The record gives the reactivity of an RNA of 177 nucleotides to DMS and 2A3. For 2A3 the reverse transcriptase was SuperScript II with manganese. DMS adducts were read by reverse transcription with MarathonRT. The reactions ran in a buffer of 150 mM KOAc, 10 mM MgCl2 and 150 mM bicine (pH 8.5), at 24 C.
RNA sequence: GGGAACGACUCGAGUAGAGUCGAAAAAGAUGCGUACCAAGCUGCGUUUCAACCUGCGUGGGUUGAGGCGACUUAGCGGAUUAAGGCGUUCUGCCCCAGUGGUCCAUUACCCCAUGCAAAGUCUGCAGAUUUCUAAUCUCUUCGGAGAUUAGAAAUCAAAAGAAACAACAACAACAAC
Reactivity to DMS in 0.01 (KOAc 150mM, MgCl2 10mM, bicine 150mM(pH8.5), 24C), signal-to-noise 2, nucleotides 027 to 126: a090g010a010u010g000c080g020u000a050c070c030a080a160g010c010u010g020c010g010u000u000u000c020a020a030c010c010u010g010c300g030u010g010g000g000u000u000g000a010g010g000c000g000a070c090u000u010a030g020c010g010g030a100u000u010a190a230g000g000c040g000u010u000c080u020g030c020c010c020c100a140g000u000g010g000u000c010c030a020u000u000a080c060c000c000c070a150u010g000c090a050a080a180g000u000c050u000g010c130a150
Reactivity to 2A3 in 0.01 (KOAc 150mM, MgCl2 10mM, bicine 150mM(pH8.5), 24C), signal-to-noise 2, nucleotides 027 to 126: a000g020a010u040g000c030g040u080a010c000c000a060a030g010c020u020g010c010g010u020u020u000c000a000a010c030c010u210g130c200g220u300g060g000g000u000u010g000a000g020g000c000g040a060c040u060u120a000g010c000g060g050a050u110u130a080a040g050g010c010g080u180u050c090u200g030c000c010c000c010a090g070u110g010g010u000c020c000a010u030u050a110c010c040c000c010a000u050g000c020a110a080a150g080u060c030u030g040c030a030